Background
Conditions: 150 mM KOAc, 10 mM MgCl2 and 150 mM bicine (pH 8.5), 24 C. The record gives the reactivity of an RNA of 177 nucleotides to 2A3 and DMS. For DMS, 1,051 sequencing reads were counted. For 2A3 the reverse transcriptase was SuperScript II with manganese. Source: RMDB library TTRDES, as collected in RNAgym.

[RMDB]
RNA sequence: GGGAACGACUCGAGUAGAGUCGAAAAGAUAUGGAUGUAUCUAAUGGAGCUCCAUAUCGGAAACGAUAUGCGAGCGAUGAAAUUAGAGUACAUCCUAAGUCAAAACGGGAGAACUUCGGUUCUCCCGGUGACUGUACACGUUCGCGUGUACAGUCACAAAAGAAACAACAACAACAAC
Reactivity to 2A3 in 0.01 (KOAc 150mM, MgCl2 10mM, bicine 150mM(pH8.5), 24C), signal-to-noise 1, nucleotides 027 to 126: g020a020u100a020u130g000g010a000u010g000u020a030u000c000u000a010a010u060g210g040a080g010c000u050c010c000a000u010a000u000c000g000g010a030a020a000c000g000a010u040a000u040g230c300g000a000g000c030g000a030u070g020a090a230a000u000u010a000g000a020g130u020a000c020a000u000c000c000u010a090a000g020u020c020a000a040a120a180c000g020g000g020a030g000a030a000c000u130u160c300g130g010u000u000c000u000c000c000c000g000
Reactivity to DMS in 0.01 (KOAc 150mM, MgCl2 10mM, bicine 150mM(pH8.5), 24C), signal-to-noise 1, nucleotides 027 to 126: g030a080u010a300u020g000g020a020u000g000u000a070u000c000u000a030a020u010g020g010a090g060c000u040c000c010a030u000a000u000c010g000g010a100a010a110c010g000a010u000a020u000g010c260g030a010g010c000g030a030u010g000a070a110a040u000u000a000g010a050g000u000a030c000a000u010c000c000u000a020a070g000u010c030a110a020a090a200c010g010g040g000a010g000a020a010c000u000u020c300g040g000u000u000c000u000c000c000c000g010